[RMDB]
RNA sequence: GGGAACGACUCGAGUAGAGUCGAAAAUCACAUGCUACGCAUGCCAUGCUGCUAGUGGUACUGACUCGUCUAGACAUGCAGUAGCCAUGUAGGUACAGUACGUACGCACUCUAGCGAUCAGACUCUAUGUCCAGAGUUACUUCGGUAACUCUGGACAAAAAGAAACAACAACAACAAC
Reactivity to 2A3 in 0.01 (KOAc 150mM, MgCl2 10mM, bicine 150mM(pH8.5), 24C), signal-to-noise 1, nucleotides 027 to 126: u090c010a020c000a040u070g070c050u210a080c160g000c000a000u050g130c040c030a140u190g060c010u060g070c010u070a050g030u040g080g060u040a140c020u010g010a000c060u010c070g140u030c080u040a010g010a180c050a000u020g100c010a050g160u090a010g180c120c000a020u000g050u110a070g000g100u120a060c010a060g060u080a050c030g000u000a040c040g070c150a070c060u020c010u020a000g020c020g060a050u100c020a000g030a040c020u000c010u150a050
Reactivity to DMS in 0.01 (KOAc 150mM, MgCl2 10mM, bicine 150mM(pH8.5), 24C), signal-to-noise 2, nucleotides 027 to 126: u010c120a200c070a070u010g030c000u040a090c190g040c030a020u010g020c130c110a090u000g000c080u000g000c050u000a090g020u020g010g030u020a170c060u000g000a070c080u000c080g000u010c040u000a050g010a020c070a050u000g000c020a180g030u010a090g030c130c040a060u010g000u000a130g010g010u000a090c050a140g050u000a030c130g000u000a040c000g020c050a090c160u000c020u000a030g010c020g000a120u010c030a110g000a120c080u000c030u000a070